Structure probing data (DMS) for a 177-nucleotide construct. It was measured as part of the RMDB library OK2TRN. DMS adducts were read by reverse transcription with MarathonRT.
RNA sequence: GGGAACGACUCGAGUAGAGUCGAAAACGUAUGAACUUGUCCCUGCUGGUCUGCAGGUUAAAAUAUCUUCUAAUGGCCUGGACUGUACCGCCAUAUUCCCUCCUGGCGGGGCGCCGAGCGCUGCACCUGCCAUUGACGACUUCGGUCGUCAAUGGCAAAAAGAAACAACAACAACAAC
Reactivity to DMS in 0.01 (KOAc 150mM, MgCl2 10mM, bicine 150mM(pH8.5), 24C), signal-to-noise 1, nucleotides 027 to 126: c110g010u000a060u000g000a050a160c090u000u000g000u000c070c000c010u040g020c090u000g000g000u000c090u010g000c040a020g000g030u000u000a050a080a090a050u000a040u000c100u000u000c040u010a090a080u000g000g020c000c020u010g010g000a060c090u000g030u000a080c040c050g000c000c020a040u000a150u000u000c020c000c000u000c110c040u000g030g000c000g030g030g000g030c060g030c030c060g000a070g010c130g000c030u010g020c140a070c070c050